Source information
This 170-nucleotide RNA was probed chemically with DMS and 2A3. Source: RMDB library 15KLIB, as collected in RNAgym.
RNA sequence: GGGAACGACUCGAGUAGAGUCGAAAAAUGCCCAGGUCGGACCGCGAGGAGGUGGAGAUGCCAUGCCGACCCGAAGAGGAAAGAAGAACUCGGACGCGAACCGUGAGUGGAACCCUGAUCCUUUAUUAAACUUCCACCUUCGGGUGGAAGAAAAGAAACAACAACAACAAC
Reactivity to DMS in 0.01 (KOAc 150mM, MgCl2 10mM, bicine 150mM(pH8.5), 24C), signal-to-noise 3, nucleotides 027 to 129: a110u030g010c040c050c000a000g030g040u030c040g100g010a030c070c060g040c000g000a070g040g000a040g010g030u020g000g000a050g020a050u000g020c000c000a060u040g090c110c060g000a090c040c000c120g030a050a050g000a000g040g010a040a000a000g000a000a040g010a040a130c080u030c030g050g010a100c100g000c000g040a060a060c100c080g050u000g000a040g050u050g020g010a100a100c000c000c000u000g000a110u020c060c020u020u060u070a060u060u070a020a070a150
Reactivity to 2A3 in 0.01 (KOAc 150mM, MgCl2 10mM, bicine 150mM(pH8.5), 24C), signal-to-noise 4, nucleotides 027 to 129: a000u140g040c000c000c000a010g000g080u060c030g020g020a040c040c000g020c000g030a040g020g010a030g000g000u040g010g000a050g010a050u140g020c000c030a060u120g000c000c010g030a060c010c000c000g000a060a020g020a020g020g020a100a000a000g030a010a000g010a010a000c010u010c060g010g010a000c040g010c010g040a040a050c010c000g040u050g040a050g000u040g040g020a080a100c000c000c000u000g040a070u060c020c000u170u120u100a140u060u250a080a020a030
The reactions ran in a buffer of 150 mM KOAc, 10 mM MgCl2 and 150 mM bicine (pH 8.5), at 24 C. The DMS profile rests on 9,724 reads.